RNA sequence: GGGAACGACUCGAGUAGAGUCGAAAACGAGGACCAGUCACCUCGUAAAACAACUGGAAAAAGUAUAGUCGCAAACGACGAAACUUACGCUCUAGCCGCUUAAUACCGGCUGGACGCUGCACCGAAGGGCCUUCGGUCGGGCAGGGCAACCUGCAGCCUGUCAUAUUACCUUCGGGUAAUAUGACAGAAAAGAAACAACAACAACAAC
Reactivity to 2A3 in 0.01 (KOAc 150mM, MgCl2 10mM, bicine 150mM(pH8.5), 24C), signal-to-noise 7, nucleotides 027 to 156: c000g000a000g000g000a030c010c000a010g010u010c030a030c010c000u000c000g060u050a000a000a000a000c010a000a010c000u000g010g100a060a080a040a000a000g090u110a110u150a070g010u020c050g010c190a110a170a170c090g030a000c010g040a070a030a000c020u050u070a040c070g020c040u000c000u000a000g000c010c000g030c020u060u080a060a020u050a130c010c010g000g000c000u000g000g000a020c060g020c040u070g000c040a010c010c000g020a020a020g120g080g060c010c040u020u010c010g020g010u020c040g060g040g000c010a000g010g000g010c030a060a100c000c010u020g010c000a010g060c010
Reactivity to DMS in 0.01 (KOAc 150mM, MgCl2 10mM, bicine 150mM(pH8.5), 24C), signal-to-noise 2, nucleotides 027 to 156: c010g000a010g010g010a270c040c040a170g000u010c060a190c010c010u010c010g020u020a030a050a090a040c050a060a130c030u000g020g010a090a120a130a120a120g030u000a040u000a220g030u010c020g000c050a160a150a200c020g030a020c000g000a080a110a060c020u000u000a050c050g000c120u000c010u020a010g000c000c010g020c040u000u000a060a120u000a100c300c020g020g000c000u000g000g000a020c020g000c010u010g000c050a080c020c010g030a090a090g000g000g000c110c030u000u000c010g060g000u000c040g000g000g090c010a050g020g010g010c140a080a110c020c000u000g020c000a100g020c070